[RMDB]
Structure probing data (DMS) for a 177-nucleotide construct.
Conditions: 150 mM KOAc, 10 mM MgCl2 and 150 mM bicine (pH 8.5), 24 C.
RNA sequence: GGGAACGACUCGAGUAGAGUCGAAAAAAGAUAUGGAACAGGCUACCCACCUAAUCGCAUCCGAGAGAUAAGUUCGGAAACGAACUUAUGGAAUGGAUGGCGAUUAGAGGCCUGUUCCUAAGUCAAAUCCUACCUUACCGUUCGCGGUAAGGUAGGAAAAAGAAACAACAACAACAAC
Reactivity to DMS in 0.01 (KOAc 150mM, MgCl2 10mM, bicine 150mM(pH8.5), 24C), signal-to-noise 2, nucleotides 027 to 126: a050a020g020a130u040a110u000g020g000a020a010c020a000g000g000c000u000a170c000c010c000a300c010c010u000a040a000u000c000g050c000a070u000c000c040g000a090g030a300g000a020u010a000a030g040u020u000c000g000g000a060a040a220c010g050a010a000c020u000u000a000u000g000g000a300a030u000g000g000a000u000g020g020c000g030a000u000u000a020g010a120g000g000c010c000u000g000u000u000c000c000u010a000a040g000u020c110a060a150a200
Reactivities are given for positions 27 through 126. Values are in units of 0.01, from 0 to 300, in steps of 10.